Chemical mapping of a 170-nucleotide RNA with 2A3 and DMS. For DMS the reverse transcriptase was MarathonRT. Reactivities are given for positions 27 through 129. It was measured as part of the RMDB library 15KLIB. Conditions: 150 mM KOAc, 10 mM MgCl2 and 150 mM bicine (pH 8.5), 24 C.
RNA sequence: GGGAACGACUCGAGUAGAGUCGAAAAUUCUUUAAUGGUGCUGAUAUUUCUGACACCAUUCCUGAUGAGAAACAGAAUGGUCACAGUUUAUAUCUAGCAGACAAUUUGACUGCUGAUGAAACAAAGGGAGGAUUGCAGUUCGCUGCAAUCAAAAGAAACAACAACAACAAC
Reactivity to 2A3 in 0.01 (KOAc 150mM, MgCl2 10mM, bicine 150mM(pH8.5), 24C), signal-to-noise 9, nucleotides 027 to 129: u030u000c010u010u140u160a100a070u090g030g010u030g010c010u010g020a030u010a050u090u100u030c010u010g010a040c010a000c060c000a000u010u010c010c020u070g020a100u120g100a030g090a050a080a010c020a000g010a020a030u020g010g000u030c020a000c010a070g010u020u020u000a060u010a020u020c100u100a010g000c000a000g070a080c080a060a160u080u080u160g120a100c040u030g000c020u020g040a070u060g060a110a050a050c070a030a090a020g070g040g010a060g080
Reactivity to DMS in 0.01 (KOAc 150mM, MgCl2 10mM, bicine 150mM(pH8.5), 24C), signal-to-noise 9, nucleotides 027 to 129: u040u010c030u000u040u010a070a070u020g000g020u000g000c010u040g010a070u040a110u010u020u010c040u000g040a160c180a000c020c020a040u020u040c120c050u000g000a140u020g020a170g030a170a150a060c090a050g000a060a030u030g000g060u000c150a200c000a070g010u000u000u000a050u030a050u030c040u000a030g010c000a020g000a110c030a080a120u040u050u070g000a080c020u020g020c040u000g000a060u040g000a080a050a070c000a020a090a040g000g020g020a080g000